[RMDB]
RNA sequence: GGGAACGACUCGAGUAGAGUCGAAAACAGUCAAAGUGAAGGCGGGCCAGACCAUCGCCGCAUUCUACCAGAGCACCGUCAUGAUCUUUGGCACGAUGGCUCGCUACAUUCUCAGAGUUAGGGAAAAGAUGCUAUAGCCGUUCGCGGCUAUAGCAUCAAAAGAAACAACAACAACAAC
Reactivity to DMS in 0.01 (KOAc 150mM, MgCl2 10mM, bicine 150mM(pH8.5), 24C), signal-to-noise 2, nucleotides 027 to 126: c140a120g020u010c070a050a070a040g010u000g020a240a070g030g010c010g010g010g000c020c040a140g010a160c040c060a100u020c100g010c050c050g050c070a070u000u000c040u010a080c040c030a120g020a110g010c090a100c050c020g000u010c090a070u000g000a070u000c020u000u010u020g010g000c030a110c110g000a110u010g000g000c000u000c080g010c060u000a070c200a120u010u000c000u000c020a170g000a080g010u000u010a090g010g000g010a070a040a070a100
Reactivity to 2A3 in 0.01 (KOAc 150mM, MgCl2 10mM, bicine 150mM(pH8.5), 24C), signal-to-noise 1, nucleotides 027 to 126: c040a020g090u030c020a000a000a140g020u100g070a060a020g020g010c000g000g070g000c030c000a030g020a080c000c010a030u050c050g030c070c000g000c020a070u060u080c030u070a090c000c080a030g020a020g100c020a020c120c030g030u020c070a290u080g050a100u050c030u040u030u040g080g000c060a020c030g050a040u110g010g000c010u000c010g030c030u100a050c010a080u180u000c010u000c040a010g010a010g200u090u160a050g010g000g100a010a040a030a040
Chemical mapping of a 177-nucleotide RNA with DMS and 2A3. The DMS profile rests on 1,142 reads. The RNA was probed in 150 mM KOAc, 10 mM MgCl2 and 150 mM bicine (pH 8.5) at 24 C. High 2A3 reactivity points to a flexible backbone, as in loops and unpaired stretches. Source: RMDB library OK2TRN, as collected in RNAgym.